[RMDB]
RNA sequence: GGGAACGACUCGAGUAGAGUCGAAAAGAUAUGGAUCGUGGUGAGCUUUUGACGAGAGUCAUUCGGAAACGAAUGUACUCUCGAUAAGCUCUCACGAUCCUAAGUCAAAAGGGUUCUUCGGAACCCACCUUGAUAUUCUCUUCGGAGAAUAUCAAGGAAAAGAAACAACAACAACAAC
Reactivity to DMS in 0.01 (KOAc 150mM, MgCl2 10mM, bicine 150mM(pH8.5), 24C), signal-to-noise 4, nucleotides 027 to 126: g020a040u010a300u000g000g010a010u000c000g030u000g020g010u010g000a010g020c000u000u000u000u000g020a270c160g000a010g000a010g010u000c000a010u000u000c000g020g010a130a100a280c010g010a030a000u000g000u030a020c000u000c000u000c000g020a030u000a010a030g000c000u000c000u000c010a010c000g000a000u000c000c000u000a000a080g000u000c020a080a090a210a160g010g000g000u000u000c000u000u010c200g020g000a010a000c000c000c010a010
Reactivity to 2A3 in 0.01 (KOAc 150mM, MgCl2 10mM, bicine 150mM(pH8.5), 24C), signal-to-noise 5, nucleotides 027 to 126: g010a020u080a050u170g000g010a000u010c010g000u040g030g240u300g050a000g000c020u080u150u290u290g300a190c040g000a000g000a000g010u020c000a010u000u020c010g030g030a070a070a050c010g000a010a000u010g020u100a010c000u010c000u010c000g000a000u000a000a000g000c000u000c000u010c000a000c000g000a000u000c000c000u010a000a000g000u020c030a010a000a070a170g010g010g000u010u000c010u040u110c280g140g010a010a010c000c010c000a030
Conditions: 150 mM KOAc, 10 mM MgCl2 and 150 mM bicine (pH 8.5), 24 C. Chemical mapping of a 177-nucleotide RNA with DMS and 2A3. For DMS the reverse transcriptase was MarathonRT. In probing experiments dimethyl sulfate is read out at A N1 and C N3, which are open when not base-paired. For 2A3, 14,926 sequencing reads were counted.